[RMDB]
RNA sequence: GGGAACGACUCGAGUAGAGUCGAAAAGAACCUAAUUUUUGGGAUAACCAAACGAAAGCGCAAGAUAUUAUAGAUAAAAAUAAUGCGUUAAAAGCAAUAGUUAAUGGUUAUAAAACACUACAAGCAGGUAGCAAGUAGUAUUCGUACUACUUGCUACAAAAGAAACAACAACAACAAC
Reactivity to DMS in 0.01 (KOAc 150mM, MgCl2 10mM, bicine 150mM(pH8.5), 24C), signal-to-noise 2, nucleotides 027 to 126: g000a140a190c010c020u040a080a120u010u030u020u000u010g000g040g000a150u000a030a010c030c020a010a090a020c020g000a170a140a110g000c000g000c020a050a110g030a220u000a040u010u030a150u020a170g000a300u060a000a100a050a140a070u000a010a090u000g000c000g000u000u000a020a010a060a130g010c080a050a050u000a110g000u000u000a070a100u000g010g010u000u000a000u000a050a040a020a060c190a060c170u000a050c180a050a050g000c150a130g010
Reactivity to 2A3 in 0.01 (KOAc 150mM, MgCl2 10mM, bicine 150mM(pH8.5), 24C), signal-to-noise 4, nucleotides 027 to 126: g050a020a080c010c000u070a100a140u060u210u110u110u170g040g000g020a020u030a010a010c000c000a100a020a000c000g040a090a020a020g000c000g010c050a080a020g110a110u020a040u130u160a090u140a080g060a080u300a260a070a070a010a010u120a040a020u030g000c010g010u030u080a010a100a010a030g030c020a010a090u010a080g030u010u080a120a020u090g010g000u020u000a010u020a020a020a010a010c220a040c080u230a080c120a140a020g140c100a010g160
Description: This 177-nucleotide RNA was probed chemically with DMS and 2A3. It was measured as part of the RMDB library OK1LIB. 2A3 adducts were read by reverse transcription with SuperScript II with manganese. For DMS, 2,467 sequencing reads were counted. Values cover nucleotides 27 to 126.